RNA sequence: GGGAACGACUCGAGUAGAGUCGAAAAAUAUGAAGGCAUGCAUUCACACAUAUACAGGUGGACGCACGCCGAUACACCUCGAUACAUUUGCAUCGACGCAUCGAACCACCUAGCAUGUGGACCUAUGCAGUGAUACCUCCUUCGGGAGGUAUCACUGAAAAGAAACAACAACAACAAC
Reactivity to 2A3 in 0.01 (KOAc 150mM, MgCl2 10mM, bicine 150mM(pH8.5), 24C), signal-to-noise 4, nucleotides 027 to 126: a000u270a080u240g090a120a040g050g000c020a020u060g000c030a060u040u080c000a010c000a000c030a040u150a060u200a290c160a090g090g030u000g020g010a010c010g000c020a030c010g000c000c000g010a000u010a000c050a010c010c030u020c060g070a060u060a210c060a170u140u100u210g060c030a060u010c060g020a000c060g030c020a020u060c080g040a100a080c020c010a020c040c010u030a030g130c060a030u090g030u080g060g040a010c000c010u060a070u140g020
Reactivity to DMS in 0.01 (KOAc 150mM, MgCl2 10mM, bicine 150mM(pH8.5), 24C), signal-to-noise 2, nucleotides 027 to 126: a100u070a020u050g000a260a070g000g000c000a090u000g000c000a060u000u000c040a070c010a000c030a070u040a090u010a130c300a010g000g020u000g050g010a030c040g010c040a050c070g000c000c010g000a140u020a050c170a150c080c010u060c000g010a010u040a050c180a180u040u000u040g010c100a020u020c010g000a040c170g010c010a000u010c010g000a060a100c030c000a050c060c090u060a130g000c140a070u000g000u000g000g000a040c070c000u010a000u020g050